[RMDB]
RNA sequence: GGGAACGACUCGAGUAGAGUCGAAAACUUCAGGAGGACUGUUGAGGCGGUGUCUCUGCUGAAUUUCUCAACAUACGCGCGGCCGCCUCCGAGCAGACCCAGGAGAAGCAGAGAUGCACUGAGAGACAAAUAAUCACGGAUUCGUCCGUGAUUAUUUAAAAGAAACAACAACAACAAC
Reactivity to 2A3 in 0.01 (KOAc 150mM, MgCl2 10mM, bicine 150mM(pH8.5), 24C), signal-to-noise 7, nucleotides 027 to 126: c020u060u020c040a050g020g060a030g030g050a080c030u050g040u140u080g030a020g000g070c040g030g000u030g050u030c050u020c020u100g050c000u020g080a130a170u050u160u080c070u030c030a030a110c040a060u230a110c100g030c010g010c030g100g000c000c000g020c000c000u000c000c000g020a010g000c020a010g010a100c030c000c020a020g040g080a090g020a050a000g010c010a000g020a010g010a060u070g010c040a040c090u070g040a040g010a020g010a110c050
Reactivity to DMS in 0.01 (KOAc 150mM, MgCl2 10mM, bicine 150mM(pH8.5), 24C), signal-to-noise 7, nucleotides 027 to 126: c090u000u010c020a100g010g010a100g000g000a120c080u020g000u030u000g000a050g000g030c090g000g020u010g010u020c030u030c020u010g030c010u000g010a110a120u010u010u020c050u010c040a100a070c140a080u030a120c150g010c070g040c100g010g000c010c020g020c010c000u000c030c200g000a110g030c070a050g010a130c010c000c020a120g000g000a060g000a120a060g000c010a030g000a100g010a070u010g010c030a100c080u020g000a090g000a120g010a080c170
Source: RMDB library OK1LIB, as collected in RNAgym. Chemical mapping of a 177-nucleotide RNA with 2A3 and DMS. Reactivities are given for positions 27 through 126. The DMS profile rests on 15,156 reads. High DMS reactivity at an A or C suggests that its Watson-Crick edge is free.